[RMDB]
Structure probing data (2A3 and DMS) for a 177-nucleotide construct. For DMS the reverse transcriptase was MarathonRT.
RNA sequence: GGGAACGACUCGAGUAGAGUCGAAAAGAUAUGGAGCUGUGUAGACAUGCGAUGCUCGGAAACGAGUAAUUCGCAACAGCUACCAGCUCCUAAGUCAAACAGUCAAUACCUUCGGGUAUUGACUGAACUAGCAUGCGUAGUUCGCUACGCAUGCUAGAAAAGAAACAACAACAACAAC
Reactivity to 2A3 in 0.01 (KOAc 150mM, MgCl2 10mM, bicine 150mM(pH8.5), 24C), signal-to-noise 2, nucleotides 027 to 126: g000a000u000a020u110g000g010a000g000c000u020g010u030g020u300a010g070a150c130a300u180g020c000g000a000u000g010c000u000c010g000g010a010a020a000c000g010a000g010u070a100a300u170u080c000g000c000a100a180c070a130g000c000u000a020c010c000a000g000c000u000c000c000u010a010a000g010u000c000a040a080a140c000a020g010u010c000a000a000u000a020c020c000u050u130c300g120g000g000u010a000u000u000g000a000c000u000g000a040a010
Reactivity to DMS in 0.01 (KOAc 150mM, MgCl2 10mM, bicine 150mM(pH8.5), 24C), signal-to-noise 2, nucleotides 027 to 126: g020a010u000a180u020g010g000a000g030c000u000g010u000g050u000a030g010a080c100a100u000g030c000g010a030u000g020c000u000c010g030g000a030a020a090c010g000a010g000u010a020a130u010u010c010g000c000a060a150c210a160g000c000u000a000c010c000a000g000c010u010c000c000u000a000a050g000u020c000a110a120a270c000a000g020u010c010a010a010u000a000c010c000u000u020c220g010g000g000u000a000u000u010g000a000c000u000g000a030a080